Source: RMDB libraries RFM100 and RFMREP, as collected in RNAgym. An RNA of 177 nucleotides, treated with 2A3 and DMS and read out base by base. 2A3 adducts were read by reverse transcription with SuperScript II with manganese. Conditions: 150 mM KOAc, 10 mM MgCl2 and 150 mM bicine (pH 8.5), 24 C.
RNA sequence: GGGAACGACUCGAGUAGAGUCGAAAAGAAAGCUUUGUGAUUAAAUAUGGCGCUUAUGUGUAGAACCGGUUGUACUAUAUUUUUAAACUGGUUUUUCAUGUAAGAGCCCAAAUAGUAUCACAAAAAAUGUCAAUCAAGUAUUCGUACUUGAUUGACAAAAAGAAACAACAACAACAAC
Reactivity to 2A3 in 0.01 (KOAc 150mM, MgCl2 10mM, bicine 150mM(pH8.5), 24C), signal-to-noise 4, nucleotides 027 to 126: g070a020a080a000g060c060u040u020u010g010u000g000a010u080u110a070a090a070u130a080u130g000g000c020g000c020u000u000a010u000g010u000g010u020a010g000a000a000c010c000g020g030u020u060g100u070a040c060u030a110u030a190u250u150u020u020u230a040a020a000c010u000g010g000u000u000u000u000u000c000a000u010g000u000a000a000g000a010g010c000c000c010a010a030a010u060a010g110u070a000u000c000a000c000a000a000a010a020a000a020
Reactivity to DMS in 0.01 (KOAc 150mM, MgCl2 10mM, bicine 150mM(pH8.5), 24C), signal-to-noise 2, nucleotides 027 to 126: g000a070a130a130g000c110u000u010u010g010u000g010a020u000u030a110a140a080u000a130u030g000g000c010g000c000u000u000a000u000g010u000g000u000a000g000a000a010c000c010g000g000u000u000g010u000a090c230u010a140u010a020u020u030u000u000u030a080a070a000c010u000g000g000u000u000u000u000u000c000a030u000g000u000a000a020g000a010g000c000c010c230a100a130a070u020a100g000u020a010u000c000a000c000a000a000a030a060a090a080